[RMDB]
RNA sequence: GGGAACGACUCGAGUAGAGUCGAAAAGGCGGUCAGCGCUGACUGGGGGCUGGACGAGAUCCUGCUGCUCAGCACCGGGCCCGCUGAGAUCGACGCCAGACUGCGGCUGGUGGUUGGCCGGCGCGGAUCCCCUUGUAUUAUUCGUAAUACAAGGGGAAAAAGAAACAACAACAACAAC
Reactivity to 2A3 in 0.01 (KOAc 150mM, MgCl2 10mM, bicine 150mM(pH8.5), 24C), signal-to-noise 4, nucleotides 027 to 126: g030g020c010g020g030u060c030a030g040c030g020c080u030g050a110c000u030g070g060g010g030g000c020u010g010g010a050c040g050a030g000a090u010c010c000u010g020c020u050g070c000u000c020a050g060c030a080c050c080g000g040g000c000c040c070g010c020u050g070a140g010a130u050c020g060a060c030g000c000c000a010g020a060c030u090g060c040g100g030c010u010g000g020u060g060g100u040u020g020g000c010c000g020g020c030g000c050g050g020a050
Reactivity to DMS in 0.01 (KOAc 150mM, MgCl2 10mM, bicine 150mM(pH8.5), 24C), signal-to-noise 9, nucleotides 027 to 126: g000g020c010g010g010u000c040a060g010c020g010c060u000g000a090c020u010g010g010g010g000g010c010u000g000g010a050c020g000a300g000a250u000c020c020u000g000c030u000g010c010u000c020a070g020c110a100c160c080g000g000g000c050c100c120g020c010u000g000a110g000a060u000c040g010a180c250g000c010c010a050g000a070c030u000g000c040g000g000c010u010g010g010u000g010g010u000u000g000g010c010c010g000g010c040g010c100g000g010a200

Notes
The data come from the RNA Mapping Database (RMDB), library OK2TRN. This 177-nucleotide RNA was probed chemically with 2A3 and DMS. For DMS the reverse transcriptase was MarathonRT. Reactivities are given for positions 27 through 126.